[RMDB]
RNA sequence: GGGAACGACUCGAGUAGAGUCGAAAAAUGCUGAUGCAGUCGGGACGUAUUCAACGGGCGCUGGCCUGAUAUUGUACGGGACAAUGGACGUCAGUGCUUCAGCAGCUGGGUUCCGCGUCGGCGUCGAUCUUCGGACGGGGUUCGCCUCGUUCGAAGGAAAAGAAACAACAACAACAAC
Reactivity to DMS in 0.01 (KOAc 150mM, MgCl2 10mM, bicine 150mM(pH8.5), 24C), signal-to-noise 9, nucleotides 027 to 126: a050u020g000c010u000g010a010u010g010c050a120g010u030c100g010g000g010a050c020g010u010a050u020u020c090a100a130c110g010g000g000c010g020c110u010g000g000c020c020u010g000a210u040a020u010u010g010u010a100c130g010g000g000a100c030a040a040u010g000g010a160c200g000u000c010a040g020u000g010c020u010u020c060a080g020c120a080g000c080u010g010g000g010u000u000c010c040g000c050g010u000c010g000g000c020g010u000c080g010a080
Reactivity to 2A3 in 0.01 (KOAc 150mM, MgCl2 10mM, bicine 150mM(pH8.5), 24C), signal-to-noise 9, nucleotides 027 to 126: a000u070g000c010u010g000a010u020g020c040a040g110u130c030g020g010g020a020c040g130u080a090u060u130c080a070a030c040g020g000g000c020g000c040u030g040g010c000c010u050g020a020u010a020u070u030g020u020a060c050g050g030g040a010c020a020a030u040g030g020a010c020g010u010c010a000g010u000g000c000u110u080c020a030g010c020a010g000c030u050g010g040g000u020u010c000c000g000c000g010u010c000g000g000c000g010u030c020g030a080
Notes
Chemical mapping of a 177-nucleotide RNA with DMS and 2A3. For 2A3, 69,073 sequencing reads were counted. The data come from the RNA Mapping Database (RMDB), library OK1LIB. The DMS profile rests on 64,878 reads. Conditions: 150 mM KOAc, 10 mM MgCl2 and 150 mM bicine (pH 8.5), 24 C.